[RMDB]
RNA sequence: GGGAACGACUCGAGUAGAGUCGAAAAGAAGGAGCCGUUCCACGCAGGACGCGAAGAAGAAGUAGCCGAAGCAACUUCAGGUCGCCGCGCACGAACUGGCGCGCGAUCUCCGCCGCGCUCGAGUAGGGUUCCCCGGGGAUCCCUCUUCGAGCCCUUGCCCAAUUCUACAGUUCGCUGUAGAAUUGGGAAAAGAAACAACAACAACAAC
Reactivity to 2A3 in 0.01 (KOAc 150mM, MgCl2 10mM, bicine 150mM(pH8.5), 24C), signal-to-noise 1, nucleotides 027 to 156: g130a040a040g060g050a010g000c030c010g040u030u000c060c010a050c050g050c050a030g020g040a040c050g030c050g070a050a040g020a060a010g030a050a010g080u100a030g030c090c110g060a130a020g020c050a080a000c010u110u050c060a050g020g000u010c010g030c120c050g000c010g020c010a060c170g210a300a070c170u250g080g010c000g000c000g000c000g000a000u030c030u000c000c030g060c050c010g080c030g000c000u000c000g000a010g020u070a030g030g000g000u000u020c000c000c030c000g260g000g000g000a010u000c000c000c010u040c030u050u020c020g000a000g000c060c000c000u020u140g030